Background
Structure probing data (2A3 and DMS) for a 177-nucleotide construct. Source: RMDB library M2PK50, as collected in RNAgym. For 2A3, 4,064 sequencing reads were counted. The DMS profile rests on 1,775 reads.
RNA sequence: GGGAACGACUCGAGUAGAGUCGAAAAACAAUCUGGUUCGCCAGAUUGUCAAUGUCUUCCUAAAAUCCUUGGAAGACUGUAUAUAUAGAAUAAAGGUCGAUAGUACCUGUGCUUUCGAGCACAGGAAGUUAAGGCAUUCUUUCGAGAAUGCCUUAACAAAAGAAACAACAACAACAAC
Reactivity to 2A3 in 0.01 (KOAc 150mM, MgCl2 10mM, bicine 150mM(pH8.5), 24C), signal-to-noise 4, nucleotides 027 to 126: a000c010a000a000u000c000u010g030g000u040u030c130g040c050c000a000g000a000u000u000g010u000c010a020a040u090g000u000c000u000u010c000c000u000a010a020a010a150u030c000c000u020u020g000g000a000a000g010a010c000u000g020u000a220u000a010u000a020u060a160g070a200a130u250a280a200a000g000g000u010c020g020a050u070a150g060u050a060c000c010u010g000u000g000c000u130u080u100c300g110a010g000c000a000c000a010g000g000a010a010
Reactivity to DMS in 0.01 (KOAc 150mM, MgCl2 10mM, bicine 150mM(pH8.5), 24C), signal-to-noise 2, nucleotides 027 to 126: a060c000a010a000u000c000u000g010g000u000u020c220g010c010c000a000g000a000u000u000g000u000c080a090a050u000g010u000c000u000u010c000c000u010a010a010a000a160u010c000c000u000u000g000g010a020a000g000a040c010u000g010u000a100u000a090u000a230u000a150g020a140a120u010a050a170a000g000g020u000c220g000a130u000a050g000u000a080c000c000u000g010u000g010c000u000u000u010c230g020a050g000c000a010c000a000g000g000a050a030